[RMDB]
RNA sequence: GGGAACGACUCGAGUAGAGUCGAAAAAGACAUACGUUCGCGUAUGUCUGACGGGGACCUGACCCUAAGGAAAUGCUCUAUGACAGGACACACUGAUUGUGAUACCUCGAGAUUUCGAUCUCGAGAAGAAAACGACAUGAUUCGUCAUGUCGUUUUCAAAAGAAACAACAACAACAAC
Reactivity to 2A3 in 0.01 (KOAc 150mM, MgCl2 10mM, bicine 150mM(pH8.5), 24C), signal-to-noise 4, nucleotides 027 to 126: a010g000a000c000a010u010a000c000g050u030u060c240g000c000g110u000a010u000g000u000c000u000g000a010c030g000g010g020g010a030c000c010u090g230a300c000c000c010u030a070a040g090g050a090a110a070u150g030c010u010c010u070a110u120g060a040c010a010g020g040a040c010a000c010a010c040u100g090a260u170u110g070u010g070a070u090a100c000c010u000c010g000a000g000a010u050u080u160c210g040a020u020c000u010c010g000a000g000a010a010
Reactivity to DMS in 0.01 (KOAc 150mM, MgCl2 10mM, bicine 150mM(pH8.5), 24C), signal-to-noise 6, nucleotides 027 to 126: a000g000a020c000a000u000a010c000g010u000u010c230g030c010g030u000a000u000g010u000c000u000g000a080c140g010g010g010g000a140c040c030u000g010a140c030c010c030u010a080a120g010g000a070a090a080u010g000c050u000c030u000a050u010g010a110c090a030g000g010a160c070a050c050a060c120u000g000a110u000u000g010u000g000a180u000a110c150c010u000c010g000a020g000a020u000u000u010c190g000a010u000c000u000c000g000a010g000a050a070